[RMDB]
RNA sequence: GGGAACGACUCGAGUAGAGUCGAAAAAGUAUCGGGUUCGCCCGAUACUGUUGGCGCGCGGCCUUUGUCCUGUCGCGCGUAUAUAGCGCGCGAUAUACGCGCAUGUGGGGUCGUUCGCGACCCCAAACAUUAUCGAUCUGUUCGCAGAUCGAUAAUGAAAAGAAACAACAACAACAAC
Reactivity to 2A3 in 0.01 (KOAc 150mM, MgCl2 10mM, bicine 150mM(pH8.5), 24C), signal-to-noise 3, nucleotides 027 to 126: a000g000u000a000u010c000g020g010g000u040u080c190g100c030c000c000g000a000u000a000c000u000g010u010u130g050g000c000g010c000g010c010g020g120c030c000u100u100u110g080u040c010c010u020g010u030c010g000c000g000c000g040u000a030u010a010u020a020g030c050g000c000g000c020g000a020u030a020u020a140c010g010c000g090c040a020u140g090u100g120g000g000g000u010c000g010u040u050c170g010c020g040a000c000c000c000c000a000a000a000
Reactivity to DMS in 0.01 (KOAc 150mM, MgCl2 10mM, bicine 150mM(pH8.5), 24C), signal-to-noise 4, nucleotides 027 to 126: a020g000u000a000u000c000g010g010g010u000u020c240g010c000c000c000g010a000u000a000c000u000g000u000u000g010g010c030g010c010g010c000g000g000c050c100u000u010u010g000u000c050c050u000g010u000c050g010c000g010c000g010u000a010u010a070u010a130g010c020g010c010g010c010g010a060u000a040u010a070c010g010c010g010c030a050u020g020u000g000g010g010g000u000c000g010u000u010c190g000c010g010a010c000c000c000c000a000a020a060